[RMDB]
RNA sequence: GGGAACGACUCGAGUAGAGUCGAAAAUACGUCUUCUGGAUCACAUCGCUCAUCACCCUGUUCGGUUUCUGCGUGUCAUUUUCCACCACCAUCACCGCUCACAUAGCGUCCGUGACGCUUUUCGUGAUAGUCACCUGCGGCGCGUUCUUUGAGCGCGGCCCAUAGCAAACUUCGGUUUGCUAUGGGCAAAAGAAACAACAACAACAAC
Reactivity to 2A3 in 0.01 (KOAc 150mM, MgCl2 10mM, bicine 150mM(pH8.5), 24C), signal-to-noise 3, nucleotides 027 to 156: u160a030c030g040u010c050u090u000c030u080g040g020a060u120c030a010c030a070u060c060g020c030u040c010a070u060c010a100c030c010c000u070g080u080u070c060g040g020u020u020u070c030u070g020c030g000u060g050u040c040a090u030u060u120u030c020c020a050c010c020a030c050c000a040u100c030a030c050c000g000c000u020c000a010c000a060u120a000g000c000g010u000c010c060g130u110g000a000c000g070c000u040u040u140u190c130g020u030g080a110u100a090g020u000c010a000c070c080u130g020c120g050g010c000g000c000g030u110u040c030u080u060u140g030a030g010c000g010c010g050
Reactivity to DMS in 0.01 (KOAc 150mM, MgCl2 10mM, bicine 150mM(pH8.5), 24C), signal-to-noise 1, nucleotides 027 to 156: u010a050c070g050u000c040u000u000c050u010g010g000a120u000c030a090c060a080u010c020g020c040u000c050a080u010c040a050c040c000c030u010g040u010u000c040g000g010u000u000u020c010u030g020c030g040u020g050u010c030a110u000u000u000u000c040c020a100c000c030a020c040c020a110u000c050a110c050c000g000c070u000c030a040c080a070u000a040g010c030g090u000c020c110g010u010g010a050c010g010c070u000u000u010u000c200g040u010g010a060u000a080g030u000c010a020c020c050u010g020c180g020g050c000g040c010g030u020u030c040u000u000u000g020a090g040c000g030c040g030